[RMDB]
RNA sequence: GGGAACGACUCGAGUAGAGUCGAAAAUAUUCCGUACUAAGGAUUUCGGUCCGGAACGUCUAGAGACUACACGGCAGACCAAUUUUGUGGUGGUAUGAAUGGAUAGUCCCUAGUUACCAUCUAGGCAUCCCUAAAACAGGUUCGCCUGUUUUAGGGAAAAAGAAACAACAACAACAAC
Reactivity to DMS in 0.01 (KOAc 150mM, MgCl2 10mM, bicine 150mM(pH8.5), 24C), signal-to-noise 3, nucleotides 027 to 126: u000a180u010u000c010c000g020u000a040c070u000a090a120g020g010a140u000u000u000c120g020g010u000c020c010g020g000a010a030c120g010u000c010u010a040g000a030g010a030c000u000a020c300a080c050g010g000c060a040g010a040c010c010a040a070u000u020u010u010g010u010g010g050u000g000g000u000a020u000g000a070a080u010g010g010a230u000a050g000u000c010c020c020u000a040g000u000u000a140c010c030a070u010c070u010a070g010g030c240a170
Reactivity to 2A3 in 0.01 (KOAc 150mM, MgCl2 10mM, bicine 150mM(pH8.5), 24C), signal-to-noise 1, nucleotides 027 to 126: u090a010u000u020c020c000g000u000a010c030u060a110a110g110g040a190u110u070u260c080g000g000u010c000c000g010g010a050a000c030g000u020c000u000a020g000a010g000a050c010u020a020c000a000c040g070g000c010a010g000a040c000c030a050a070u040u090u110u240g210u160g120g080u030g000g000u030a050u020g040a140a080u020g010g000a020u020a020g030u000c010c000c010u000a000g000u000u020a050c030c020a050u000c050u050a030g060g070c030a120